[RMDB]
RNA sequence: GGGAACGACUCGAGUAGAGUCGAAAACUCCAAUUCUUCUCCUUAACGACCGUAAUUGUUUGCAUAUGGUCUCAACCAGCAGCCUGUAGCGGUUUAUUCGUGCAGCAGGCGCAUCCGUAAAGCAAACCAUAAUUUAAUCAUUCGUGAUUAAAUUAUGAAAAGAAACAACAACAACAAC
Reactivity to 2A3 in 0.01 (KOAc 150mM, MgCl2 10mM, bicine 150mM(pH8.5), 24C), signal-to-noise 9, nucleotides 027 to 126: c030u040c020c010a060a080u080u050c020u090u010c030u060c030c010u090u110a120a050c070g020a040c010c030g080u040a070a120u090u110g020u020u010u010g000c010a010u020a020u080g010g000u010c010u010c050a070a140c060c050a020g030c020a030g010c020c000u030g010u090a040g010c010g010g100u060u130u160a100u120u120c030g020u050g040c080a100g010c000a000g050g000c000g010c010a030u010c030c030g100u090a060a060a070g000c000a010a010a010c000
Reactivity to DMS in 0.01 (KOAc 150mM, MgCl2 10mM, bicine 150mM(pH8.5), 24C), signal-to-noise 5, nucleotides 027 to 126: c110u020c010c040a080a150u030u020c030u000u000c010u000c010c040u020u020a090a080c160g000a060c050c030g010u020a040a100u010u010g010u000u000u000g010c010a230u020a020u010g000g020u010c040u020c150a110a090c080c080a110g000c010a160g030c010c010u010g060u010a160g010c020g010g020u000u010u020a070u060u010c050g000u030g030c110a290g010c010a010g000g000c020g000c060a040u000c060c060g020u020a040a080a100g010c000a020a020a020c010

Notes:
Chemical mapping of a 177-nucleotide RNA with 2A3 and DMS. The reactions ran in a buffer of 150 mM KOAc, 10 mM MgCl2 and 150 mM bicine (pH 8.5), at 24 C.